The record gives the reactivity of an RNA of 177 nucleotides to 2A3 and DMS. DMS adducts were read by reverse transcription with MarathonRT. The reactions ran in a buffer of 150 mM KOAc, 10 mM MgCl2 and 150 mM bicine (pH 8.5), at 24 C.
[RMDB]
RNA sequence: GGGAACGACUCGAGUAGAGUCGAAAAAGUAAUCUACUUCAGCAACUUCCAGGCAAACACUUCUGCAGUGACCCUGGAGUCUGGCAUUGUGCUCCAUCCUGGCUCUCCGGCCUCCAUUUGCCCUGGCCAUCUAAUUGUGCUUCGGCACAAUUAGAUGAAAAGAAACAACAACAACAAC
Reactivity to 2A3 in 0.01 (KOAc 150mM, MgCl2 10mM, bicine 150mM(pH8.5), 24C), signal-to-noise 9, nucleotides 027 to 126: a010g170u150a060a070u030c040u060a050c030u080u070c030a030g000c020a050a060c020u240u040c010c010a000g010g020c070a070a120a010c010a020c040u110u170c100u300g100c140a020g010u020g060a160c010c000c000u010g010g000a000g010u000c000u000g010g010c020a080u030u160g040u060g030c010u020c010c000a050u040c010c020u020g030g000c000u000c000u000c020c010g030g000c000c010u040c020c010a050u040u030u130g030c000c000c010u010g050g020c020
Reactivity to DMS in 0.01 (KOAc 150mM, MgCl2 10mM, bicine 150mM(pH8.5), 24C), signal-to-noise 4, nucleotides 027 to 126: a080g020u010a060a040u040c040u000a040c010u000u000c060a070g000c100a080a060c080u020u030c000c010a040g020g000c040a140a090a090c050a030c040u030u020c150u040g000c120a080g000u000g010a070c200c020c010u010g000g000a020g000u010c030u000g020g010c130a030u000u020g010u010g030c010u000c010c010a060u000c030c050u000g020g000c040u000c020u000c030c050g010g000c020c040u000c020c020a060u020u010u020g010c020c010c010u000g000g000c140